Overview: The record gives the reactivity of an RNA of 177 nucleotides to 2A3 and DMS. The RNA was probed in 150 mM KOAc, 10 mM MgCl2 and 150 mM bicine (pH 8.5) at 24 C. For DMS, 12,946 sequencing reads were counted. Values cover nucleotides 27 to 126.

RNA sequence: GGGAACGACUCGAGUAGAGUCGAAAAGAUAUGGACGAUUCACUUCUUUGGAGCGAAGAACUCGGAAACGAGGGAGCUCGAAGUGAGAUCGUCCUAAGUCAAACCGCAAGUCUUCGGACUUGCGGAACAUAACUAUACGCUUCGGCGUAUAGUUAUGAAAAGAAACAACAACAACAAC
Reactivity to 2A3 in 0.01 (KOAc 150mM, MgCl2 10mM, bicine 150mM(pH8.5), 24C), signal-to-noise 6, nucleotides 027 to 126: g010a040u090a030u170g000g010a010c000g000a000u000u020c010a010c010u020u020c030u210u300u300g210g010a010g000c030g120a300a060g020a080a040c000u010c000g010g030a070a060a050c010g000a010g000g000g020a010g000c000u010c030g010a000a000g000u010g020a100g020a010u000c000g000u000c000c000u010a060a010g010u000c040a050a050a090c000c000g000c000a000a000g010u000c000u090u300c300g120g000a000c000u010u000g010c010g000g000a000a000
Reactivity to DMS in 0.01 (KOAc 150mM, MgCl2 10mM, bicine 150mM(pH8.5), 24C), signal-to-noise 7, nucleotides 027 to 126: g000a040u000a300u010g000g000a010c000g010a020u000u000c000a010c000u000u000c010u000u010u020g040g010a020g020c000g010a100a140g000a090a220c000u000c000g010g000a120a080a170c010g000a020g000g000g000a060g020c010u000c000g000a000a010g000u000g000a050g000a020u000c000g020u000c000c000u000a000a060g010u000c040a070a140a210c000c000g000c000a010a010g000u000c000u000u010c250g020g000a010c000u000u000g000c000g000g000a010a050